[RMDB]
An RNA of 170 nucleotides, treated with 2A3 and DMS and read out base by base. The 2A3 profile rests on 7,950 reads. The data come from the RNA Mapping Database (RMDB), library 15KLIB. The DMS profile rests on 9,924 reads.
RNA sequence: GGGAACGACUCGAGUAGAGUCGAAAAGAAGUUCAUGUCUACUCCCAAUGCCAUCUUUAUUUCUGAUAGAAAAAUCAAGAAAUACCCUUGUAUGGUAGGUCCUGAUUAUGCUUACUUCAAUGGUGCUAUACGAUCCCGUUCGCGGGAUCGAAAAGAAACAACAACAACAAC
Reactivity to 2A3 in 0.01 (KOAc 150mM, MgCl2 10mM, bicine 150mM(pH8.5), 24C), signal-to-noise 5, nucleotides 027 to 129: g060a030a000g030u050u130c060a020u130g040u000c000u020a040c010u010c000c020c000a020a050u110g000c000c010a030u000c040u010u090u030a030u010u000u000c020u000g010a010u020a060g300a060a190a040a020a010u060c080a120a020g000a000a030a010u020a020c020c020c010u100u070g030u140a040u010g000g030u000a030g030g020u000c020c020u030g020a070u080u180a030u110g040c030u060u040a080c000u010u040c000a010a070u070g030g030u020g010c010u080a030u020a180
Reactivity to DMS in 0.01 (KOAc 150mM, MgCl2 10mM, bicine 150mM(pH8.5), 24C), signal-to-noise 2, nucleotides 027 to 129: g050a170a070g030u060u030c180a060u070g010u000c020u040a160c100u000c000c000c000a090a050u030g050c050c040a070u000c000u030u080u010a070u030u020u000c000u050g060a080u000a120g050a010a040a080a040a020u020c030a070a050g030a080a070a010u040a080c120c050c040u050u000g040u040a040u090g020g060u000a070g000g000u020c050c050u060g000a040u030u030a110u030g000c010u000u000a000c060u000u000c070a060a060u000g020g000u060g040c060u000a070u030a210

Values cover nucleotides 27 to 129. For 2A3 the reverse transcriptase was SuperScript II with manganese.